[RMDB]
RNA sequence: GGGAACGACUCGAGUAGAGUCGAAAAUCAGAUGAGACUAGCCAUCAGACUAGAUAGUAUCACACUACAGGUACAUAGUAGAGACAUACAUAGAUGAGUAUGACACAUCAGAGGCGCGGGCCACCGACGCCCAUUACCGUUUCGACGGUAAUGGGCGAAAAGAAACAACAACAACAAC
Reactivity to 2A3 in 0.01 (KOAc 150mM, MgCl2 10mM, bicine 150mM(pH8.5), 24C), signal-to-noise 2, nucleotides 027 to 126: u060c030a020g030a080u070g010a000g040a070c070u060a020g040c010c040a120u060c030a010g060a120c010u030a010g050a100u080a060g020u020a030u100c020a020c010a010c100u180a010c020a030g020g020u030a010c020a050u070a020g040u010a010g020a000g000a050c010a040u070a010c040a040u100a030g110a140u090g050a010g040u050a030u080g020a020c000a010c000a100u070c010a020g020a020g090g000c010g030c020g040g050g000c010c000a020c060c020g070a070
Reactivity to DMS in 0.01 (KOAc 150mM, MgCl2 10mM, bicine 150mM(pH8.5), 24C), signal-to-noise 3, nucleotides 027 to 126: u030c090a110g010a060u010g020a150g000a050c030u000a080g000c020c020a080u010c100a130g020a120c040u000a050g000a120u000a080g010u000a070u000c050a100c090a040c070u000a050c030a030g000g000u000a040c040a050u010a070g020u000a050g030a110g010a100c100a050u000a030c060a070u000a070g000a080u000g000a110g000u000a020u000g010a080c060a070c090a040u000c070a060g000a090g000g000c060g010c080g020g000g040c060c090a050c040c040g000a190
Conditions: 150 mM KOAc, 10 mM MgCl2 and 150 mM bicine (pH 8.5), 24 C. An RNA of 177 nucleotides, treated with 2A3 and DMS and read out base by base. It was measured as part of the RMDB library OK2TRN. The DMS profile rests on 2,186 reads. For DMS the reverse transcriptase was MarathonRT.